[RMDB]
RNA sequence: GGGAACGACUCGAGUAGAGUCGAAAACCUGGUUUAGGGUUCCAGGCUAGCCCUAUCUAUCGGUCGAGAUGCGAGCGCUUAAGCUCAAAUUGAGUGACUGAGUUAGUGGUGAACGUAUCCCUAUGUUAAAACGGUAGCUGCUUCGGCAGCUACCGAAUCUGUGCAAUAACUUCGGUUAUUGCACAGAAAAAGAAACAACAACAACAAC
Reactivity to 2A3 in 0.01 (KOAc 150mM, MgCl2 10mM, bicine 150mM(pH8.5), 24C), signal-to-noise 1, nucleotides 027 to 156: c000c000u010g060g000u050u060u070a020g040g000g000u060u020c000c000a000g010g000c040u030a020g000c000c000c000u000a010u010c030u040a110u050c000g020g000u010c020g010a000g010a130u020g020c030g020a010g010c030g010c120u270u300a140a110g000c000u010c010a010a010a010u000u010g020a000g030u290g010a000c000u010g000a000g020u000u010a090g010u130g160g000u020g000a070a000c030g050u060a080u130c000c000c010u020a050u070g070u050u130a130a120a010a010c000g000g000u000a000g000c010u030g000c000u020u040c210g070g020c010a000g000c000u000a000c000c000g000a000a000
Reactivity to DMS in 0.01 (KOAc 150mM, MgCl2 10mM, bicine 150mM(pH8.5), 24C), signal-to-noise 1, nucleotides 027 to 156: c000c000u000g000g000u000u000u010a050g030g000g030u010u010c040c030a110g030g050c020u000a300g010c000c000c030u000a030u000c050u030a100u000c000g000g050u000c000g000a300g000a040u000g030c300g000a020g040c020g000c300u000u010a090a220g040c000u000c000a000a150a090u010u070g010a290g050u010g040a020c000u000g000a040g010u000u000a030g030u000g010g010u000g010a100a130c030g020u000a120u010c000c020c020u000a200u000g000u000u020a130a110a080a120c000g020g020u000a020g010c030u000g000c000u000u010c270g050g020c020a000g010c000u000a000c000c030g000a000a010